[RMDB]
RNA sequence: GGGAACGACUCGAGUAGAGUCGAAAAAUUAGCGCAUUAUACGGCGCGCGCAUGCUACGCGGCAUCGUAGCCGUAAUGCAUAUGCGCAUAUCGUAAUAUCGAUGCGCAUCGAUCGUACGUAGCGCGCGGGUAGACGGUGGUUCGCCACCGUCUACCCAAAAGAAACAACAACAACAAC
Reactivity to 2A3 in 0.01 (KOAc 150mM, MgCl2 10mM, bicine 150mM(pH8.5), 24C), signal-to-noise 2, nucleotides 027 to 126: a000u170u110a010g000c030g000c030a000u120u040a070u140a200c120g100g020c000g000c000g000c000g000c030a020u080g000c010u010a030c120g040c020g100g020c010a020u100c240g160u130a050g000c000c010g000u060a090a030u110g000c030a010u050a030u150g000c030g000c010a000u030a030u060c020g060u020a130a150u070a130u290c030g000a000u000g040c030g060c060a000u040c070g030a020u030c010g000u090a140c010g010u020a030g000c000g030c000g040c030
Reactivity to DMS in 0.01 (KOAc 150mM, MgCl2 10mM, bicine 150mM(pH8.5), 24C), signal-to-noise 1, nucleotides 027 to 126: a100u000u030a130g010c050g000c000a020u010u030a160u000a050c050g010g000c060g040c020g030c120g000c240a040u000g010c000u030a110c260g010c090g000g050c040a030u010c200g030u010a060g000c000c030g030u000a090a070u000g030c030a070u020a000u000g030c000g030c000a030u000a050u000c020g040u000a220a060u020a050u000c050g010a030u000g020c130g050c050a110u000c150g000a040u010c050g020u020a090c090g000u010a070g010c020g000c000g040c040
This 177-nucleotide RNA was probed chemically with 2A3 and DMS. The 2A3 profile rests on 1,347 reads. It was measured as part of the RMDB library OK2TRN. For DMS the reverse transcriptase was MarathonRT. 2A3 adducts were read by reverse transcription with SuperScript II with manganese.